RNA sequence: GGGAACGACUCGAGUAGAGUCGAAAAUAGCAGCCAUUGUAUCUGCAUCUCCUCCUAAAGAAACAGUGUUUAAAAUGGUGUCUUCAAAGUCAUCGGCCUCUAAAAAGCAGAUGAUUGAUACUGGAACGCCGGAUUAUCGAUUCGUCGAUAAUCCGGCAAAAGAAACAACAACAACAAC
Reactivity to 2A3 in 0.01 (KOAc 150mM, MgCl2 10mM, bicine 150mM(pH8.5), 24C), signal-to-noise 1, nucleotides 027 to 126: u200a040g000c010a000g000c000c010a170u050u120g100u080a100u110c000u000g000c000a000u000c020u040c070c000u020c000c000u140a200a050a000g000a030a060a030c210a120g000u000g040u150u300u070a180a180a170a110u250g000g000u010g010u030c090u130u070c030a140a140a030g000u000c000a000u040c000g110g000c010c030u170c080u170a230a050a050a000a000g000c000a000g000a000u020g000a000u020u170g000a150u030a150c050u000g000g020a010a010c050
Chemical mapping of a 177-nucleotide RNA with 2A3. For 2A3, 582 sequencing reads were counted. Conditions: 150 mM KOAc, 10 mM MgCl2 and 150 mM bicine (pH 8.5), 24 C.